[RMDB]
RNA sequence: GGGAACGACUCGAGUAGAGUCGAAAAUGUCUUUGGGAUCAUAGGAGUCAGAGAGAGAAGUCACUGGGGUCCCAAGGGGAUCAGAAAAAGAGUCAUUGGGGUCUUUGAGAAGGGAUUGCUCACAGAGCUUGUGCUUCACAUUCGUGUGAAGCACAAGAAAAGAAACAACAACAACAAC
Reactivity to DMS in 0.01 (KOAc 150mM, MgCl2 10mM, bicine 150mM(pH8.5), 24C), signal-to-noise 1, nucleotides 027 to 126: u000g000u000c010u010u000u010g010g020g040a020u010c020a150u000a100g020g010a090g000u000c050a080g020a070g010a110g000a100g040a150a060g010u010c080a090c040u000g000g000g010g010u010c020c000c000a040a010g040g000g020g000a080u010c110a060g010a050a070a030a120a100g010a070g040u010c080a160u010u010g020g000g020g000u000c010u040u010u020g000a100g010a150a060g010g090g010a100u000u010g020c040u010c070a120c110a130g000a070g020